[RMDB]
RNA sequence: GGGAACGACUCGAGUAGAGUCGAAAACUCUCAACAACUUAAUCUGAUAAACUUGUAAAAUCUACAUCCAGAUACAUCAUAAUCAAACAUCAAAAAACAAAGACUAUGAGAGAAUCUUCAAAACUUCAAGAGUGAAGUGACUGAUAACAUAUAAAGGAAUAUCAUGCACAUUCGUGUGCAUGAUAUUAAAAGAAACAACAACAACAAC
Reactivity to DMS in 0.01 (KOAc 150mM, MgCl2 10mM, bicine 150mM(pH8.5), 24C), signal-to-noise 1, nucleotides 027 to 156: c040u000c000u030c000a140a050c090a110a070c070u000u010a020a070u020c020u000g000a260u000a070a080a020c010u000u020g030u000a050a130a140a070u000c000u000a030c020a100u000c060c010a090g030a160u010a120c000a040u020c030a040u000a080a000u000c010a000a200a150c070a070u000c000a000a070a120a120a130a110c030a100a120a270g000a030c120u050a070u000g000a030g000a120g030a180a070u000c000u000u030c010a070a040a100a070c030u000u000c000a080a080g000a160g020u010g010a010a000g000u000g000a160c090u000g010a070u000a050a030c050a070u000a100u000a010a030a090g030g000
Reactivity to 2A3 in 0.01 (KOAc 150mM, MgCl2 10mM, bicine 150mM(pH8.5), 24C), signal-to-noise 3, nucleotides 027 to 156: c000u000c000u000c010a000a060c030a010a030c040u160u200a060a030u080c010u020g050a070u100a160a150a100c030u050u040g070u110a050a090a060a160u060c070u120a030c030a070u030c050c000a020g010a060u060a100c040a030u080c020a050u070a140a040u090c040a110a060a060c010a050u100c060a030a110a070a070a030a060c020a040a100a000g090a030c040u080a060u090g010a010g000a010g040a090a050u040c030u070u060c050a000a040a040a050c020u040u010c010a000a070g150a150g280u110g020a060a020g050u030g040a020c020u040g040a060u040a110a050c060a030u240a070u120a140a080a020g050g200